[RMDB]
RNA sequence: GGGAACGACUCGAGUAGAGUCGAAAACGUCUUAAAUUAAAUUUCCGUUGCUGAGCUCAUCUCAGCAAACAAUAACAAAUAACAAAUAAGAACAGCAGGGAAGGUUGUUCUUAUUUGUUACAAUUAAACUCAGAUAACGAUUCGUCGUUAUCUGAGUAAAAGAAACAACAACAACAAC
Reactivity to DMS in 0.01 (KOAc 150mM, MgCl2 10mM, bicine 150mM(pH8.5), 24C), signal-to-noise 2, nucleotides 027 to 126: c230g000u030c110u000u010a060a050a100u010u010a000a060a210u000u030u000c040c080g020u000u000g000c000u000g000a010g020c250u040c300a110u040c010u020c000a020g020c010a010a030a100c120a110a060u000a020a090c160a030a040a100u010a020a000c000a000a000a010u000a010a000g010a010a020c000a000g010c000a050g030g020g010a120a050g000g020u000u000g010u000u000c000u000u000a010u000u000u010g000u000u000a020c140a140a060u000u000a080a050
Reactivity to 2A3 in 0.01 (KOAc 150mM, MgCl2 10mM, bicine 150mM(pH8.5), 24C), signal-to-noise 5, nucleotides 027 to 126: c020g040u020c070u130u190a150a180a200u110u150a110a120a140u070u140u010c020c020g040u020u030g000c000u000g000a010g010c060u060c130a200u160c120u010c010a010g000c020a010a010a000c000a000a040u210a050a040c050a060a100a030u070a020a000c000a000a010a000u000a010a010g000a010a010c000a000g030c000a010g170g110g070a120a040g140g000u000u000g000u000u000c000u000u000a000u000u000u000g000u000u000a000c000a000a010u090u090a050a030
Structure probing data (DMS and 2A3) for a 177-nucleotide construct. For 2A3, 5,185 sequencing reads were counted. DMS adducts were read by reverse transcription with MarathonRT. The RNA was probed in 150 mM KOAc, 10 mM MgCl2 and 150 mM bicine (pH 8.5) at 24 C.